Source: RMDB library RNAMAK, as collected in RNAgym.
Structure probing data (2A3) for a 207-nucleotide construct.
Conditions: 150 mM KOAc, 10 mM MgCl2 and 150 mM bicine (pH 8.5), 24 C.
2A3 adducts were read by reverse transcription with SuperScript II with manganese.
Reactivities are rounded to 0.1 and cut off at 0 and 3.
Values cover nucleotides 27 to 156.

[RMDB]
RNA sequence: GGGAACGACUCGAGUAGAGUCGAAAAGCGUACUACAAAGUUCCGUUAUGAGAAGCAACAGCGCAUAUGUGCUAGUCUCCCAAAUAGGAGACUACCCUAUGCGACAUGCUUCUUGCAUGGACUUUGUAUCGCAAAGCAGAUGGUUCGCCAUCUGCAACACCGAUGCGUGCUUCGGCACGCAUCGGUGAAAAGAAACAACAACAACAAC
Reactivity to 2A3 in 0.01 (KOAc 150mM, MgCl2 10mM, bicine 150mM(pH8.5), 24C), signal-to-noise 2, nucleotides 027 to 156: g000c000g070u110a100c060u020a010c020a020a000a010g020u210u180c000c000g020u030u010a100u260g000a000g020a000a000g000c000a000a160c050a240g090c030g000c010a000u040a000u120g100u080g090c150u000a000g000u000c000u010c000c040c000a170a300a150u280a110g000g010a000g000a000c000u000a000c000c000c000u000a010u000g000c060g020a000c000a010u060g020c000u020u020c000u000u000g000c010a050u000g000g050a000c000u000u000u000g000u000a020u230c000g000c000a000a000a080g000c000a000g000a000u000g050g110u130u240c300g000c060c000a000u040c000u000g000c030a010a010